[RMDB]
RNA sequence: GGGAACGACUCGAGUAGAGUCGAAAAGUUGUUGUUGAAGAGUGAGAGCAACAACAACAAAAAGAAAAGAAGAAGGAUUCUCACUAAAGAAAGAAAAGAAAGGAACACAUUCACUCAAGGAAGAAAAGUUGUUUUUAAUGUUCGCAUUAAGAACAACAAAAGAAACAACAACAACAAC
Reactivity to DMS in 0.01 (KOAc 150mM, MgCl2 10mM, bicine 150mM(pH8.5), 24C), signal-to-noise 6, nucleotides 027 to 126: g010u000u000g000u000u000g000u000u010g020a050a090g000a050g020u010g000a010g000a040g010c020a000a020c000a010a000c010a010a010c020a050a050a070a120a110g000a100a060a120a080g020a090a130g000a090a090g010g020a160u020u000c000u000c000a070c030u020a120a080a070g010a070a060a090g010a090a060a090a070g000a040a070a040g010g000a060a040c050a050c090a100u020u010c020a080c070u010c080a080a100g010g010a060a060g000a070a070a080a110
Reactivity to 2A3 in 0.01 (KOAc 150mM, MgCl2 10mM, bicine 150mM(pH8.5), 24C), signal-to-noise 9, nucleotides 027 to 126: g000u000u000g000u000u000g010u000u000g030a100a040g070a020g080u020g010a020g010a010g050c010a000a010c000a000a010c010a000a000c020a010a130a030a010a000g190a020a060a000a000g140a040a010g060a040a030g110g020a100u120u000c000u000c010a010c000u030a020a030a010g110a030a040a000g080a030a090a010a010g120a030a090a010g070g030a080a000c040a010c000a110u080u060c000a030c030u050c040a050a050g110g030a050a050g060a060a110a020a020